Background
The record gives the reactivity of an RNA of 207 nucleotides to 2A3 and DMS.
[RMDB]
RNA sequence: GGGAACGACUCGAGUAGAGUCGAAAAUUUAAGUGAGGAAACUGAGGCCUCCAGCCAACAGCCAUGUGAAUGAGCCAUUUCAGAGGCAGAUCAUCCAACACCAGUCAAGCCUAGGAACAGGGCUUCACACAUGGUGGGUGUUCAGUAACACUAGCUAAUGCAUAUCAACUUUCGAGUUGAUAUGCAUAAAAGAAACAACAACAACAAC
Reactivity to 2A3 in 0.01 (KOAc 150mM, MgCl2 10mM, bicine 150mM(pH8.5), 24C), signal-to-noise 1, nucleotides 027 to 156: u160u170u120a110a050g030u060g040a030g020g080a060a120a140c060u050g030a020g040g020c000c000u000c010c050a050g050c020c010a100a070c020a150g000c000c010a000u020g020u030g020a210a160u090g010a000g000c000c000a050u030u060u000c050a060g030a000g070g000c030a020g040a050u080c030a030u080c070c040a090a060c070a100c120c040a040g030u060c060a110a020g000c000c010u010a050g030g030a030a000c070a090g000g000g120c000u080u060c000a010c000a000c000a000u010g020g000u030g000g010g000u010g060u020u030c030a010g020u070a080a000c030a010c070u060a050g010c090u110a140
Reactivity to DMS in 0.01 (KOAc 150mM, MgCl2 10mM, bicine 150mM(pH8.5), 24C), signal-to-noise 2, nucleotides 027 to 156: u010u000u010a060a050g040u000g000a070g030g000a180a090a160c040u040g010a200g010g020c020c000u020c060c060a100g000c040c020a100a080c030a190g000c000c010a040u000g040u010g020a050a120u000g000a130g010c000c010a160u010u060u000c010a050g030a060g150g050c030a210g000a090u000c040a060u040c050c060a110a080c080a210c140c050a140g000u010c020a050a140g010c000c000u000a110g010g000a010a210c170a250g030g050g000c000u010u000c040a130c000a010c000a040u040g010g060u010g000g010g000u000g050u000u030c020a020g040u000a090a010c050a120c050u000a090g020c050u010a100
For 2A3 the reverse transcriptase was SuperScript II with manganese. DMS adducts were read by reverse transcription with MarathonRT. For 2A3, 1,259 sequencing reads were counted.